[RMDB]
RNA sequence: GGGAACGACUCGAGUAGAGUCGAAAACUGCGACCAGCAUCGCCAGCACUUUCCUCAUCCUCACUUGGCAGUGAGUCCCAGUGGAGCGGUACAAGCAAUCGCAGUCGCUUGGGCCACAAUGGACAUAAGGUCGUGAUGGUUUCGACCAUCACGACCUAAAAGAAACAACAACAACAAC
Reactivity to 2A3 in 0.01 (KOAc 150mM, MgCl2 10mM, bicine 150mM(pH8.5), 24C), signal-to-noise 1, nucleotides 027 to 126: c010u040g010c010g040a030c020c040a000g030c010a130u060c040g110c040c040a030g020c040a030c000u050u040u070c000c040u080c010a120u080c030c010u040c020a030c010u030u070g140g000c080a050g020u020g040a020g070u050c040c000c000a050g040u010g040g000a040g000c030g030g040u020a040c070a190a010g210c060a070a000u050c060g020c040a020g120u040c000g020c000u030u050g030g000g030c010c000a030c020a030a080u040g020g000a010c020a020u190a050
Reactivity to DMS in 0.01 (KOAc 150mM, MgCl2 10mM, bicine 150mM(pH8.5), 24C), signal-to-noise 1, nucleotides 027 to 126: c040u010g030c050g010a100c060c170a180g000c090a060u010c080g000c060c030a070g010c090a080c110u010u030u000c040c010u020c020a120u020c080c020u000c010a060c090u000u020g000g000c130a110g020u000g000a100g000u000c010c000c020a090g000u010g020g030a100g000c130g010g000u010a070c000a070a050g020c090a100a100u000c030g000c050a040g000u000c140g010c020u000u000g020g000g030c010c020a040c100a120a020u050g010g010a110c160a100u010a110

The record gives the reactivity of an RNA of 177 nucleotides to 2A3 and DMS. 2A3 adducts were read by reverse transcription with SuperScript II with manganese. DMS adducts were read by reverse transcription with MarathonRT. The data come from the RNA Mapping Database (RMDB), library OK2TST.